[RMDB]
RNA sequence: GGGAACGACUCGAGUAGAGUCGAAAAUUUCUCACCCUUGCUUUUCUUAUUUAGAAAGAACUGUGAUCUUCCAUAAAUACAGCAAAAAAGGUAGUAAAAGGUAGAAAAUAGUACAUAAAUUGCAUUAUGAAUCAGUGCCUGGACUGCAGAGGGAUGAUGAGUAGGUUUUAUUCGUAAAACCUACUCAAAAAGAAACAACAACAACAAC
Reactivity to DMS in 0.01 (KOAc 150mM, MgCl2 10mM, bicine 150mM(pH8.5), 24C), signal-to-noise 3, nucleotides 027 to 156: u000u000u000c020u020c030a170c090c050c030u000u000g040c030u000u010u000u000c000u010u020a080u010u000u010a110g010a050a050a050g010a040a050c050u020g000u000g010a120u000c010u000u000c030c020a200u000a010a030a050u000a040c090a090g000c050a010a030a080a090a060a060g010g020u000a060g010u000a080a080a140a070g020g040u000a100g010a140a060a110a050u000a040g010u000a060c020a050u000a060a080a110u000u000g010c020a080u010u000a050u000g020a090a090u010c040a050g020u000g020c020c020u000g000g000a070c070u000g030c030a100g010a080g020g030g000a040u010g010a170
Reactivity to 2A3 in 0.01 (KOAc 150mM, MgCl2 10mM, bicine 150mM(pH8.5), 24C), signal-to-noise 2, nucleotides 027 to 156: u010u040u010c030u020c010a020c000c010c000u030u030g030c010u110u190u160u090c010u040u270a210u190u180u080a070g050a030a100a000g040a110a060c070u030g020u030g070a040u030c020u110u010c030c020a040u040a120a050a010u130a050c050a030g110c050a040a080a000a000a040a100g010g030u010a010g000u000a000a090a030a000g020g000u020a010g040a010a100a030a010u090a050g040u030a060c000a020u110a050a180a000u100u100g030c010a010u060u060a080u160g080a090a050u050c000a030g010u000g050c000c020u010g010g010a020c020u020g010c010a030g010a030g080g030g020a010u040g050a060
An RNA of 207 nucleotides, treated with DMS and 2A3 and read out base by base. For 2A3 the reverse transcriptase was SuperScript II with manganese. Reactivities are rounded to 0.1 and cut off at 0 and 3. Source: RMDB library OK3TST, as collected in RNAgym. The 2A3 profile rests on 1,661 reads.